This 177-nucleotide RNA was probed chemically with DMS and 2A3. For 2A3, 2,928 sequencing reads were counted. 2A3 adducts were read by reverse transcription with SuperScript II with manganese. The reactions ran in a buffer of 150 mM KOAc, 10 mM MgCl2 and 150 mM bicine (pH 8.5), at 24 C. For DMS the reverse transcriptase was MarathonRT.

[RMDB]
RNA sequence: GGGAACGACUCGAGUAGAGUCGAAAAGAUAUGGACCAUCUGGUUACUGAUGACCGAGACUCGGAAACGAGUCUCGCAAGGUGUCAGCCAGAGUGGUCCUAAGUCAAAACAUAGGUUCGCCUAUGAACGUGGAUAGGAUGUUCGCAUCCUAUCCACGAAAAGAAACAACAACAACAAC
Reactivity to DMS in 0.01 (KOAc 150mM, MgCl2 10mM, bicine 150mM(pH8.5), 24C), signal-to-noise 2, nucleotides 027 to 126: g010a060u000a300u020g020g010a000c000c000a070u000c000u000g000g000u000u000a210c140u020g000a040u000g010a110c210c000g020a020g000a020c000u000c000g010g000a110a080a220c000g010a000g000u000c000u020c000g000c160a110a130g010g010u000g010u000c100a100g020c020c020a010g000a020g020u000g010g000u000c000c000u000a000a070g000u010c090a110a040a170a290c020a010u000a030g000g020u020u010c250g030c010c000u000a000u000g000a010a160
Reactivity to 2A3 in 0.01 (KOAc 150mM, MgCl2 10mM, bicine 150mM(pH8.5), 24C), signal-to-noise 2, nucleotides 027 to 126: g020a040u080a020u110g000g000a010c000c000a020u000c000u030g000g040u110u250a160c070u100g130a160u180g140a000c020c040g010a000g000a000c000u000c000g010g050a040a060a030c010g010a000g050u040c010u050c000g000c000a150a300g100g070u160g040u150c060a040g000c010c000a000g060a050g210u080g000g000u000c010c000u000a000a010g000u000c030a000a010a140a130c010a030u010a010g010g070u030u040c300g140c070c000u000a000u030g060a100a050